[RMDB]
RNA sequence: GGGAACGACUCGAGUAGAGUCGAAAAGAAAAUUCGCAGAAAGUAGUUAAAUCCACGGGACCAAAACACCAAGAACAGUACAAAUGCGAUCGAAAGUCAAAAGAUGGUGAUGAGACUACUUGUGGAAAUGCCAGUAUAGUUUCGACUAUACUGGCAUAAAAGAAACAACAACAACAAC
Reactivity to DMS in 0.01 (KOAc 150mM, MgCl2 10mM, bicine 150mM(pH8.5), 24C), signal-to-noise 3, nucleotides 027 to 126: g000a120a090a110a140u000u000c050g010c020a070g010a180a060a080g000u000a030g000u010u010a050a300a030u010c020c030a060c080g000g000g000a090c030c020a040a130a090a080c110a040c040c030a050a100g010a070a060c090a030g010u010a070c140a030a070a080u000g020c090g000a020u010c060g000a050a080a110g000u000c090a040a060a110a120g000a110u000g020g020u010g010a050u000g000a170g010a040c020u000a030c030u010u000g020u010g000g000a050a090
Reactivity to 2A3 in 0.01 (KOAc 150mM, MgCl2 10mM, bicine 150mM(pH8.5), 24C), signal-to-noise 1, nucleotides 027 to 126: g060a000a100a000a040u080u040c020g000c050a040g040a190a060a000g010u040a000g000u020u090a040a090a030u050c080c000a000c040g050g000g030a040c020c000a110a000a060a060c050a030c000c030a010a040g050a100a040c010a030g070u130a030c050a030a140a030u090g050c020g010a010u010c010g060a120a040a010g050u050c020a000a050a030a130g060a030u100g050g020u060g020a060u030g000a020g030a030c030u030a000c010u030u000g010u020g040g050a110a210

This 177-nucleotide RNA was probed chemically with DMS and 2A3. For 2A3 the reverse transcriptase was SuperScript II with manganese. Reactivities are given for positions 27 through 126. The 2A3 profile rests on 1,273 reads. The data come from the RNA Mapping Database (RMDB), library OK2TST.